Record summary
Structure probing data (DMS and 2A3) for a 177-nucleotide construct.
[RMDB]
RNA sequence: GGGAACGACUCGAGUAGAGUCGAAAAGGUAAGGCACUUUCAAAAAAUAGCCAAACCACACAUCAUAAAGAAAACCACCACAAUCAAAAUCGGUAACUAUCAGCUUUCAGGGGGUCUCAGGUUAUCAUACAGAUAGACAUUUCGAUGUCUAUCUGUAAAAAGAAACAACAACAACAAC
Reactivity to DMS in 0.01 (KOAc 150mM, MgCl2 10mM, bicine 150mM(pH8.5), 24C), signal-to-noise 5, nucleotides 027 to 126: g020g020u020a030a290g000g010c020a120c140u040u010u030c100a000a050a100a050a070a060u020a150g000c010c020a030a160a050c010c010a100c150a070c130a060u030c080a100u010a040a120a120g000a060a040a070a090c060c030a070c050c030a040c100a050a060u010c110a040a020a050a040u010c080g010g020u010a030a050c070u000a050u010c080a060g000c040u000u000u000c050a040g000g000g000g000g010u000c040u010c040a040g000g000u000u010a080u020c070a110
Reactivity to 2A3 in 0.01 (KOAc 150mM, MgCl2 10mM, bicine 150mM(pH8.5), 24C), signal-to-noise 8, nucleotides 027 to 126: g010g010u040a010a050g020g000c010a040c100u060u140u150c170a070a050a020a020a010a090u170a050g000c010c000a030a030a010c030c000a020c020a010c000a060u140c010a040u130a150a150a040g090a040a090a040a010c020c000a020c000c000a040c050a060a080u100c040a040a070a020a100u130c070g040g020u040a020a010c020u020a040u200c030a020g050c010u020u110u080c030a020g030g000g030g000g060u020c010u020c030a020g050g010u040u050a060u050c020a010